This 177-nucleotide RNA was probed chemically with DMS and 2A3.
The 2A3 profile rests on 1,039 reads.
It was measured as part of the RMDB library M2PK90.
For DMS, 602 sequencing reads were counted.
As a SHAPE reagent, 2A3 marks flexible, mostly unpaired nucleotides at the ribose 2'-OH.
Conditions: 150 mM KOAc, 10 mM MgCl2 and 150 mM bicine (pH 8.5), 24 C.
For DMS the reverse transcriptase was MarathonRT.
RNA sequence: GGGAACGACUCGAGUAGAGUCGAAAAUAAAAUCGUAGGGCGAGACGAUCGACGUAAAACGCUCAAACUACUCGAGACCAAAGGAAUACGCUUCGGUAACUCGCUCUAAUCCCGAGCGAUAAAUGAAGCUUUAAAGCUGUUUCGACAGCUUUAAAGCAAAAGAAACAACAACAACAAC
Reactivity to DMS in 0.01 (KOAc 150mM, MgCl2 10mM, bicine 150mM(pH8.5), 24C), signal-to-noise 1, nucleotides 027 to 126: u010a130a020a100a190u000c010g020u000a090g000g000g010c010g020a100g000a070c100g000a060u000c030g000a060c000g000u010a030a030a040a090c140g000c020u000c210a120a100a190c010u000a010c030u000c000g000a010g000a130c080c010a070a050a110g000g000a190a120u000a070c010g020c040u000u000c070g030g000u000a150a060c150u000c000g020c000u000c000u010a070a280u010c040c060c010g000a000g000c030g000a020u000a060a010a090u010g010a100a030
Reactivity to 2A3 in 0.01 (KOAc 150mM, MgCl2 10mM, bicine 150mM(pH8.5), 24C), signal-to-noise 1, nucleotides 027 to 126: u080a010a060a010a070u040c000g010u010a110g000g040g000c060g000a010g000a000c000g010a070u070c040g020a000c010g060u080a000a060a000a070c040g030c070u020c080a060a080a000c050u090a030c000u000c030g030a020g010a040c000c090a070a080a020g160g020a140a090u110a130c020g000c080u080u040c020g060g000u000a020a010c040u020c020g000c000u000c000u000a010a000u000c000c000c010g010a000g040c000g040a040u070a050a150a050u140g090a090a030